[RMDB]
RNA sequence: GGGAACGACUCGAGUAGAGUCGAAAACUCUAGGUGCCCAGGCAUCUGUAAUCUUUGAAGCUCUCCAGAAGAUUCUGUCACCUCUUGCAGACCGAGGACCACUGAGCUACCAUCAUCUCUUUGUUCCUUUGUUUUCUCUUACACAAAACUUUAUUGAAUGCCCUAAUUAUUUCGAUAAUUAGGGCAUAAAAGAAACAACAACAACAAC
Reactivity to DMS in 0.01 (KOAc 150mM, MgCl2 10mM, bicine 150mM(pH8.5), 24C), signal-to-noise 2, nucleotides 027 to 156: c020u000c020u010a060g010g020u000g000c030c050c060a170g050g030c020a030u000c030u010g040u000a090a050u000c030u000u000u020g010a110a100g000c030u000c020u000c050c020a200g040a070a080g010a110u000u000c000u000g000u020c030a080c050c020u020c030u000u010g040c030a060g010a060c040c020g000a080g000g000a050c040c010a070c040u000g000a090g020c070u000a090c050c050a090u000c040a080u000c000u000c020u010u010u000g020u010u000c030c010u000u010u000g010u000u000u000u010c040u000c040u010u010a140c110a210c050a060a060a050a120c060u010u000u000a120u080u010g010a120

The data come from the RNA Mapping Database (RMDB), library OK3TST. This 207-nucleotide RNA was probed chemically with DMS. For DMS, 3,313 sequencing reads were counted. Conditions: 150 mM KOAc, 10 mM MgCl2 and 150 mM bicine (pH 8.5), 24 C. For DMS the reverse transcriptase was MarathonRT.